[RMDB]
RNA sequence: GGGAACGACUCGAGUAGAGUCGAAAAUCAAAGAGCGUCGCACACACGCAGACUAAGUCUGCUGCAUGCAGAGCCUAAAGCGCAGGCUCUGUGUGCGAGAUAUCGUUCAAAAUGCAUGCAGAAAAAAGGGCUAUUGUCUGUUCGCAGACAAUAGCCCAAAAGAAACAACAACAACAAC
Reactivity to 2A3 in 0.01 (KOAc 150mM, MgCl2 10mM, bicine 150mM(pH8.5), 24C), signal-to-noise 1, nucleotides 027 to 126: u130c020a100a030a070g030a000g000c060g040u000c000g000c000a000c000a010c010a000c010g030c020a000g010a020c040u190a180a080g070u000c000u010g020c010u000g000c000a030u000g000c000a020g010a010g010c000c000u080a070a130a040g120c130g080c150a000g000g000c030u040c000u030g000u030g000u000g000c020g000a020g000a000u150a040u100c030g050u040u020c040a060a050a000a050u070g020c000a010u000g000c010a030g120a020a040a000a000a000a030